Source: RMDB library TTRDEL, as collected in RNAgym. This 177-nucleotide RNA was probed chemically with 2A3 and DMS. The RNA was probed in 150 mM KOAc, 10 mM MgCl2 and 150 mM bicine (pH 8.5) at 24 C. For 2A3 the reverse transcriptase was SuperScript II with manganese. Values cover nucleotides 27 to 126.
[RMDB]
RNA sequence: GGGAACGACUCGAGUAGAGUCGAAAAGAUAUGGAGACGAGUAUGGAGAUCCUCGGAAACGAGAAGAUCUAUGAAGUACCGUCUCCUAAGUCAAACCCGUAACAUUCGUUCGCGAAUGUUACGGGAAGCCAGUGAUGUUGUUCGCAACAUCACUGGCAAAAGAAACAACAACAACAAC
Reactivity to 2A3 in 0.01 (KOAc 150mM, MgCl2 10mM, bicine 150mM(pH8.5), 24C), signal-to-noise 4, nucleotides 027 to 126: g010a010u040a010u120g000g010a010g010a010c010g020a070g110u010a010u050g050g010a010g010a010u000c000c000u000c000g010g030a060a020a020c010g010a000g040a300a090g000a020u000c020u030a300u220g090a100a030g010u000a000c000c000g010u000c000u000c000c000u010a020a000g010u000c020a040a030a100c020c000c000g010u000a000a000c010a000u000u000c010g050u060u090c300g000c010g190a010a010u000g000u000u000a000c000g020g000g000a000a010
Reactivity to DMS in 0.01 (KOAc 150mM, MgCl2 10mM, bicine 150mM(pH8.5), 24C), signal-to-noise 2, nucleotides 027 to 126: g010a030u000a300u010g000g000a020g000a010c000g020a120g010u000a010u000g010g010a010g000a000u000c010c000u000c000g000g000a040a100a130c010g010a030g000a150a040g000a010u000c000u000a140u020g000a110a190g010u000a000c010c010g000u000c020u010c000c010u000a000a030g020u000c020a090a110a220c010c000c000g000u010a000a020c000a010u000u000c000g020u000u000c250g020c020g000a000a000u000g010u000u000a010c000g040g000g010a000a030